[RMDB]
RNA sequence: GGGAACGACUCGAGUAGAGUCGAAAAGAUAUGGAUUAUGGCAACUUUUGACGGAUGGUACAUCGGAAACGAUGUACGAUCCGAUAAGUUGCAUAAUCCUAAGUCAAAAGUGUGCGUUCGCGCACACCCCACUCGAAAGGUUCGCCUUUCGAGUGGGAAAAGAAACAACAACAACAAC
Reactivity to DMS in 0.01 (KOAc 150mM, MgCl2 10mM, bicine 150mM(pH8.5), 24C), signal-to-noise 1, nucleotides 027 to 126: g020a050u000a300u000g000g010a040u010u000a030u000g020g030c020a010a020c010u010u000u010u000g020a290c100g000g020a010u000g000g010u000a010c010a010u000c030g000g010a060a060a120c020g030a010u000g000u000a000c010g000a000u000c020c000g000a020u010a040a040g020u020u000g030c020a000u000a000a010u000c000c000u000a000a060g010u010c040a110a110a110a190g010u000g010u000g010c000g010u000u010c300g070c020g010c000a000c000a020c030
Reactivity to 2A3 in 0.01 (KOAc 150mM, MgCl2 10mM, bicine 150mM(pH8.5), 24C), signal-to-noise 2, nucleotides 027 to 126: g000a010u030a040u140g010g000a000u020u000a010u040g300g120c000a010a000c030u160u120u280u300g270a220c270g000g000a020u040g130g040u010a000c020a000u000c000g010g040a010a100a020c000g000a010u010g000u000a010c000g000a000u010c000c010g010a010u030a060a000g010u030u000g000c000a010u000a000a000u000c000c000u010a030a010g040u000c070a090a040a070a080g000u020g010u000g000c030g010u040u230c300g000c030g000c160a000c000a000c000
Source: RMDB library TTRDES, as collected in RNAgym. Structure probing data (DMS and 2A3) for a 177-nucleotide construct.